[RMDB]
RNA sequence: GGGAACGACUCGAGUAGAGUCGAAAAAAACUAGUCCCAGUUGGCAGUGCGACACACACGGAGAGCAGUGGCUGGCUCGGCGUCUCGGCACGGGGAAGUGCACCGCUGGCUGCCGAGUUUGACGAGACACGCGCUAAGAAUUCGUUCUUAGCGCGUGAAAAGAAACAACAACAACAAC
Reactivity to 2A3 in 0.01 (KOAc 150mM, MgCl2 10mM, bicine 150mM(pH8.5), 24C), signal-to-noise 5, nucleotides 027 to 126: a000a000a000c130u100a030g020u010c000c000c000a000g030u030u060g040g010c050a040g020u060g060c010g050a010c010a000c000a000c000a020c080g040g020a040g010a000g090c060a010g020u040g060g030c000u020g020g000c000u010c010g020g020c000g010u020c010u000c020g000g000c010a030c030g020g000g030g050a110a100g060u060g080c050a050c030c040g090c120u020g070g000c030u070g000c010c010g000a000g010u030u050u080g040a030c020g010a000g040a020
Reactivity to DMS in 0.01 (KOAc 150mM, MgCl2 10mM, bicine 150mM(pH8.5), 24C), signal-to-noise 6, nucleotides 027 to 126: a030a040a060c130u020a090g020u010c010c000c000a110g010u010u010g000g010c050a040g010u010g000c040g010a080c110a090c110a100c100a060c080g020g010a060g000a110g020c040a090g010u020g000g010c040u010g000g000c020u000c020g000g010c020g000u010c020u010c040g000g000c010a040c030g000g020g010g010a080a110g010u010g020c070a080c080c010g020c090u010g000g000c040u030g020c000c000g010a040g000u000u000u000g020a100c070g010a070g000a270
About this RNA: An RNA of 177 nucleotides, treated with 2A3 and DMS and read out base by base. It was measured as part of the RMDB libraries RFM100 and RFMREP. Values cover nucleotides 27 to 126. DMS adducts were read by reverse transcription with MarathonRT. 2A3 adducts were read by reverse transcription with SuperScript II with manganese. The RNA was probed in 150 mM KOAc, 10 mM MgCl2 and 150 mM bicine (pH 8.5) at 24 C.